[RMDB]
Overview: Chemical mapping of a 207-nucleotide RNA with 2A3 and DMS.
RNA sequence: GGGAACGACUCGAGUAGAGUCGAAAACAUCGACGGCGAGCGUGUAACCAACAAGGUGCGGAAACUCAACAAUGGCGCUGGCGGCACGGUGCUGAACAAGUCGAUGAUUGAAGCGAUUCUUGAUUACGAUUAUUCGGAGUACCUCGCAACGCAGUUGCAGGAGAAUACACUUCGGUGUAUUCUCCUGAAAAGAAACAACAACAACAAC
Reactivity to 2A3 in 0.01 (KOAc 150mM, MgCl2 10mM, bicine 150mM(pH8.5), 24C), signal-to-noise 5, nucleotides 027 to 156: c040a080u040c030g010a020c020g030g040c040g020a040g020c040g000u050g050u070a050a100c070c030a030a070c090a060a090g090g010u080g040c040g020g100a120a040a030c070u090c040a010a040c020a070a200u150g050g000c020g020c080u080g100g000c010g020g000c070a020c090g010g000u020g010c010u010g000a030a020c070a220a030g020u020c020g020a040u030g000a010u000u020g050a020a000g050c060g140a120u050u050c010u030u050g050a050u010u100a090c020g010a040u050u040a040u070u110c020g020g000a010g000u010a020c010c000u010c010g010c020a030a030c020g000c060a040g000u060u080g040
Reactivity to DMS in 0.01 (KOAc 150mM, MgCl2 10mM, bicine 150mM(pH8.5), 24C), signal-to-noise 3, nucleotides 027 to 156: c070a120u000c030g020a070c030g020g030c020g000a080g030c020g000u020g000u000a120a140c060c020a050a140c090a100a170g020g020u000g010c010g000g020a110a090a150c100u000c030a040a080c050a050a100u000g010g020c030g020c040u020g030g020c000g030g000c130a050c070g000g010u000g010c010u020g010a060a050c060a040a090g010u000c000g010a060u000g000a220u000u010g020a040a070g020c180g020a300u000u000c020u000u000g010a160u000u000a080c020g010a090u000u010a140u000u010c010g020g000a120g000u000a040c020c030u010c030g020c020a080a040c030g000c030a070g000u020u000g000

The RNA was probed in 150 mM KOAc, 10 mM MgCl2 and 150 mM bicine (pH 8.5) at 24 C.
High 2A3 reactivity points to a flexible backbone, as in loops and unpaired stretches.